[RMDB]
Source: RMDB library M2RFPK, as collected in RNAgym. An RNA of 207 nucleotides, treated with 2A3 and read out base by base. For 2A3, 565 sequencing reads were counted. Reactivities are rounded to 0.1 and cut off at 0 and 3. The reactions ran in a buffer of 150 mM KOAc, 10 mM MgCl2 and 150 mM bicine (pH 8.5), at 24 C.

RNA sequence: GGGAACGACUCGAGUAGAGUCGAAAAAAGAAAUCAAAAAAGAUUCCUGAGACAAACACGCUUCACAAUGUGCGGCAAAGAAACAUUGUUUAUGCAAAGGCACUUCGCAAUGUGUGCUCAAACAUUGACUACCGUCCACCGUUCGCGGUGGACGGAACUUAGUCGUAUCCUUCGGGAUACGACUAAGAAAAGAAACAACAACAACAAC
Reactivity to 2A3 in 0.01 (KOAc 150mM, MgCl2 10mM, bicine 150mM(pH8.5), 24C), signal-to-noise 1, nucleotides 027 to 156: a000a030g260a070a050a020u250c190a120a050a110a120a030a010g060a070u040u000c000c000u080g160a040g070a050c080a000a030a020c030a010c060g000c000u000u010c020a020c000a010a000u060g040u030g010c000g080g040c110a060a130a110g030a010a030a000c010a000u000u000g040u040u160u140a070u050g000c020a050a110a060g140g000c000a000c000u000u040c150g000c050a040a020u070g030u010g020u000g030c020u040c150a030a080a000c030a030u010u070g040a040c040u080a080c130c040g010u000c000c030a000c010c000g060u100u080c220g040c060g050g020u000g000g060a000c000g000g000a000a000